[RMDB]
RNA sequence: GGGAACGACUCGAGUAGAGUCGAAAAAGAAAAAGAAAAAUAGUGUGUUGGAGCGCGCGGAGUAAACAUAUAUGGUUCAUAUAUGUCCGUAUGCACGUAAAAAAAGCGAGAAAAGAAAGAAAAGAAACGUCAUUAUUACUUUCGAGUAAUAAUGACGAAAAGAAACAACAACAACAAC
Reactivity to 2A3 in 0.01 (KOAc 150mM, MgCl2 10mM, bicine 150mM(pH8.5), 24C), signal-to-noise 3, nucleotides 027 to 126: a000g120a000a060a030a000a000g160a000a150a000a000a020u150a090g100u080g030u020g030u040u100g070g060a110g000c040g010c000g000c000g000g030a030g000u230a070a120a000c000a000u010a000u020a000u020g250g300u300u300c030a000u000a000u000a000u010g020u020c000c010g020u010a030u100g000c000a000c050g010u080a000a000a000a000a000a000a250g030c080g000a020g100a130a080a030a020g130a060a120a000g070a020a070a000a000g060a040a080a010
Reactivity to DMS in 0.01 (KOAc 150mM, MgCl2 10mM, bicine 150mM(pH8.5), 24C), signal-to-noise 3, nucleotides 027 to 126: a110g010a050a040a080a130a130g000a020a090a040a050a100u020a050g000u030g010u010g010u000u020g000g030a130g020c050g020c050g010c020g000g010a220g020u030a080a120a100c000a000u000a000u000a010u000g020g010u060u090c020a000u010a000u000a000u010g000u010c000c020g020u000a080u040g000c020a020c020g010u010a010a000a060a040a020a110a070g030c050g000a080g010a070a040a060a080g000a060a060a140g000a060a020a070a050g020a100a070a180
This 177-nucleotide RNA was probed chemically with 2A3 and DMS.
2A3 adducts were read by reverse transcription with SuperScript II with manganese.
The 2A3 profile rests on 1,860 reads.
The data come from the RNA Mapping Database (RMDB), library OK1LIB.
The reactions ran in a buffer of 150 mM KOAc, 10 mM MgCl2 and 150 mM bicine (pH 8.5), at 24 C.
Values cover nucleotides 27 to 126.